Chemical mapping of a 207-nucleotide RNA with 2A3. 2A3 adducts were read by reverse transcription with SuperScript II with manganese. Conditions: 150 mM KOAc, 10 mM MgCl2 and 150 mM bicine (pH 8.5), 24 C.
RNA sequence: GGGAACGACUCGAGUAGAGUCGAAAACGACGUACUGGGACCUUGAUUCUGCUAGAGGGGAAACUAAUUUGAUUGACUUUGAUAGGAGUAUCGCUAGUAAGAACCGUGCCGGACACGUAGUGCAGCUGUAUUUUACCCGACCAGUUAAGCAGACCAACCUAUUGUCUGCGUUCGCGCAGACAAUAGGAAAAGAAACAACAACAACAAC
Reactivity to 2A3 in 0.01 (KOAc 150mM, MgCl2 10mM, bicine 150mM(pH8.5), 24C), signal-to-noise 2, nucleotides 027 to 156: c070g060a000c010g000u060a020c020u070g000g060g070a030c020c000u080u030g000a060u190u040c000u010g010c020u000a000g000a040g010g000g000g010a010a000a010c050u060a120a090u150u130u110g070a140u060u060g050a090c140u210u090u060g050a060u060a020g000g020a000g020u010a010u010c030g030c040u000a030g030u060a260a020g000a080a040c030c010g020u020g000c000c010g040g050a080c000a000c050g070u070a070g020u010g000c020a000g000c030u000g010u150a070u100u160u060u080a050c000c000c000g040a030c010c000a020g010u080u090a150a000g030c000a000g010a010c000c010a000a040